[RMDB]
RNA sequence: GGGAACGACUCGAGUAGAGUCGAAAAGACACAACUAACUUAAAUCUUAAAAACAAAUAAACAAACAAAAACCCUAAAUACAAGCCUUCUUUCGCUAUUGUUUGGCAAAUAAGAUUUCACAAGAGGGUAGAAAGAACUGCCUUGAUUCUUGGUGUUACUCAUUACGAUCGUUCGCGAUCGUAAUGAGAAAAGAAACAACAACAACAAC
Reactivity to 2A3 in 0.01 (KOAc 150mM, MgCl2 10mM, bicine 150mM(pH8.5), 24C), signal-to-noise 1, nucleotides 027 to 156: g050a000c000a000c000a090a240c020u090a080a050c020u130u240a170a160a050u020c020u050u130a190a160a120a090a000c050a000a030a080u300a040a110a020c090a040a100a000c030a110a120a080a090a040c040c000c000u120a050a020a000u090a110c020a050a030g120c020c000u000u080c000u160u180u150c050g040c010u000a030u170u080g050u050u050u020g020g000c000a070a080a000u130a000a000g030a060u050u060u140c070a060c000a010a010g030a030g010g040g000u060a000g050a040a140a000g060a040a020c030u000g000c000c000u040u080g020a070u160u060c000u040u000g020g030u030g000u020u030a050